Conditions: 150 mM KOAc, 10 mM MgCl2 and 150 mM bicine (pH 8.5), 24 C. An RNA of 177 nucleotides, treated with 2A3 and DMS and read out base by base.

RNA sequence: GGGAACGACUCGAGUAGAGUCGAAAAAUAAAGAGCGUAAUCGCGUCAUUGAGUGACGUGAAGAUCAUCCAAGUGUGCUGUCUACAGUCGUAGAUAGCGCACAUUACGCUAAGAUGAUCAUAAAAAACAUAGAAUGUUCGUUCGCGAACAUUCUAUGAAAAGAAACAACAACAACAAC
Reactivity to 2A3 in 0.01 (KOAc 150mM, MgCl2 10mM, bicine 150mM(pH8.5), 24C), signal-to-noise 4, nucleotides 027 to 126: a000u280a010a060a020g060a010g000c010g030u030a130a090u100c010g000c000g000u010c000a020u050u300g210a130g240u050g010a000c000g010u000g040a050a030g000a010u010c010a000u000c010c050a120a070g020u000g000u000g010c010u000g020u000c000u000a060c090a290g190u300c200g000u120a000g000a010u000a010g000c010g010c000a000c000a000u010u030a010c010g000c000u020a000a030g010a010u020g010a000u020c010a000u270a010a160a020a010a000a000
Reactivity to DMS in 0.01 (KOAc 150mM, MgCl2 10mM, bicine 150mM(pH8.5), 24C), signal-to-noise 3, nucleotides 027 to 126: a100u000a040a030a080g010a150g000c010g020u000a050a080u000c030g010c000g020u000c000a040u000u010g000a180g020u000g010a000c010g030u000g020a050a090g010a010u000c000a020u000c030c130a070a080g020u000g010u010g010c000u000g020u000c000u000a020c010a140g030u020c230g010u000a000g000a000u000a000g020c000g020c010a000c000a030u000u000a030c010g030c000u000a090a110g010a040u010g010a010u010c020a120u020a000a040a050a060a070a080
Notes: 2A3 adducts were read by reverse transcription with SuperScript II with manganese. For DMS the reverse transcriptase was MarathonRT. The data come from the RNA Mapping Database (RMDB), library M2PK90.